[RMDB]
RNA sequence: GGGAACGACUCGAGUAGAGUCGAAAAGAUAUGGACUACGGACUGCUGCAACUGAGGUCGGAAACGACUCCCCACCAGUUGAACUACAGCGACGUAGUCCUAAGUCAAACACUCCUUCGGGAGUGAACAAUAACUGAGUGUUCGCACUCAGUUAUUGAAAAGAAACAACAACAACAAC
Reactivity to DMS in 0.01 (KOAc 150mM, MgCl2 10mM, bicine 150mM(pH8.5), 24C), signal-to-noise 8, nucleotides 027 to 126: g010a050u010a300u000g000g000a010c000u000a000c020g000g010a160c040u000g030c000u000g000c000a000a010c000u000g010a080g020g010u000c010g010g010a090a100a170c020g010a010c010u000c040c030c010c010a300c080c010a010g000u000u000g000a050a040c090u020a300c000a000g000c020g000a060c010g000u000a010g010u000c000c000u000a010a090g000u000c040a110a090a240c010a000c000u000c000c000u000u010c180g030g010g010a010g010u000g000a040a090
Reactivity to 2A3 in 0.01 (KOAc 150mM, MgCl2 10mM, bicine 150mM(pH8.5), 24C), signal-to-noise 4, nucleotides 027 to 126: g010a010u100a060u170g000g000a000c000u010a000c020g050g120a110c110u270g020c000u010g000c010a000a000c010u010g010a020g020g010u000c010g020g020a050a070a040c030g020a020c020u050c040c020c000c000a010c000c000a000g000u020u000g010a070a030c090u220a060c190a000g000c000g040a020c000g000u000a000g000u010c000c000u000a010a000g000u000c010a020a090a020c000a000c010u010c010c000u040u100c240g120g010g000a000g000u010g010a040a020